[RMDB]
RNA sequence: GGGAACGACUCGAGUAGAGUCGAAAAGCUCUGCGAGACAGAGCGAACAACAAAGAGAGAUCGAAAAUCUUAGAGGAGAGAACGAAUCUGUCGACUUCACUAGGACAUUGUCGAUCAGAGGUCCAAAGACCAUUGAUUGGUUCGCCGAUCGAUGGUCAAAAGAAACAACAACAACAAC
Reactivity to DMS in 0.01 (KOAc 150mM, MgCl2 10mM, bicine 150mM(pH8.5), 24C), signal-to-noise 9, nucleotides 027 to 126: g000c000u000c000u000g010c040g020a180g010a180c020a010g000a020g000c000g000a080a050c150a120a090c170a070a090a090g010a120g000a140g000a010u000c010g000a040a030a100a230u000c000u000u000a010g010a070g010g010a010g000a100g000a180a030c010g000a090a110u050c150u060g000u000c010g000a300c000u000u000c000a100c010u000a010g000g000a030c180a090u010u020g010u000c000g000a010u000c000a070g000a120g000g000u010c030c050a050a100a100
Reactivity to 2A3 in 0.01 (KOAc 150mM, MgCl2 10mM, bicine 150mM(pH8.5), 24C), signal-to-noise 9, nucleotides 027 to 126: g000c000u000c000u000g010c050g180a120g080a180c000a000g000a000g000c000g010a020a020c050a020a020c010a010a190a010g130a010g010a000g000a020u000c000g020a010a010a020a060u000c010u010u020a010g010a020g020g010a010g010a010g040a090a040c020g030a070a130u150c120u160g070u050c020g030a080c000u000u000c000a000c030u020a010g010g020a010c030a150u080u170g130u050c010g000a000u010c020a000g030a020g030g060u030c030c020a030a040a020